[RMDB]
RNA sequence: GGGAACGACUCGAGUAGAGUCGAAAAAUUUGCUGCUUGUAGUCUCACAGUGAUACGAGCAGUUAUACGCAUGGGAUAAAAUAACAUUGGGCCACUGUAAAUUGAGAUGAAGUAACCAUUUUCAUCUGAAUUAGGGACUAUUCGUAGUCCCUAAUUCAAAAGAAACAACAACAACAAC
Reactivity to DMS in 0.01 (KOAc 150mM, MgCl2 10mM, bicine 150mM(pH8.5), 24C), signal-to-noise 3, nucleotides 027 to 126: a100u020u030u030g000c000u000g000c020u000u010g030u000a040g030u020c030u010c140a070c150a090g010u020g010a120u000a000c010g000a000g000c020a010g010u000u030a010u030a100c140g010c100a040u000g000g000g000a120u000a080a060a080a100u010a160a080c080a170u030u030g000g000g030c090c010a010c120u000g020u020a080a050a190u010u030g010a150g000a030u000g010a060a050g080u010a060a230c230c140a110u050u010u000u000c000a030u000c050u000
Reactivity to 2A3 in 0.01 (KOAc 150mM, MgCl2 10mM, bicine 150mM(pH8.5), 24C), signal-to-noise 6, nucleotides 027 to 126: a000u100u100u140g010c000u000g000c000u010u020g010u060a120g120u050c000u030c050a110c050a080g050u040g070a020u010a010c000g000a000g000c000a000g000u030u020a070u020a010c080g030c040a040u090g030g000g040a020u100a170a160a050a040u140a150a040c060a060u050u140g050g040g000c040c010a030c030u030g030u080a070a120a190u130u170g120a070g000a040u010g010a020a000g030u090a030a030c010c010a030u070u000u010u000c010a010u000c010u010

Chemical mapping of a 177-nucleotide RNA with DMS and 2A3. Source: RMDB libraries RFM100 and RFMREP, as collected in RNAgym. In probing experiments dimethyl sulfate is read out at A N1 and C N3, which are open when not base-paired.